Conditions: 150 mM KOAc, 10 mM MgCl2 and 150 mM bicine (pH 8.5), 24 C. The record gives the reactivity of an RNA of 177 nucleotides to 2A3 and DMS.
RNA sequence: GGGAACGACUCGAGUAGAGUCGAAAAUCCAAGUGCUUGUUUUUUAUGGGGAACUUUCUUCGGCGGAGGCGGUCUUAAACCGAAUGCGAAACGCGAUUUCAGGGUCGAAAUCGGUAUUUUUGCUGGCAAUCCUGGACUAUUUCGAUAGUCCAGGAUUAAAAGAAACAACAACAACAAC
Reactivity to 2A3 in 0.01 (KOAc 150mM, MgCl2 10mM, bicine 150mM(pH8.5), 24C), signal-to-noise 2, nucleotides 027 to 126: u030c040c010a070a020g030u040g040c040u100u060g050u000u060u040u020u020u070a150u130g000g000g000g030a040a060c040u080u180u100c040u080u100c050g090g000c040g030g030a040g040g000c030g000g020u000c020u050u160a080a060a010c030c030g060a030a080u150g030c030g030a030a020a000c110g040c050g020a000u010u010u020c060a060g270g000g070u130c100g040a020a020a000u000c000g020g000u010a090u010u110u040u040u110g030c000u000g000g010c030
Reactivity to DMS in 0.01 (KOAc 150mM, MgCl2 10mM, bicine 150mM(pH8.5), 24C), signal-to-noise 3, nucleotides 027 to 126: u040c000c010a110a130g010u000g000c100u000u000g000u000u010u000u010u020u030a100u040g000g000g000g020a070a070c070u010u000u010c060u000u000c060g020g000c060g010g010a100g000g010c070g020g000u000c060u040u010a030a080a130c040c020g010a050a050u020g030c060g010a020a040a080c180g010c030g010a030u010u000u010c010a180g010g000g000u010c130g020a020a010a040u000c030g000g010u010a000u010u010u000u000u010g020c010u000g000g010c290

It was measured as part of the RMDB libraries RFM100 and RFMREP.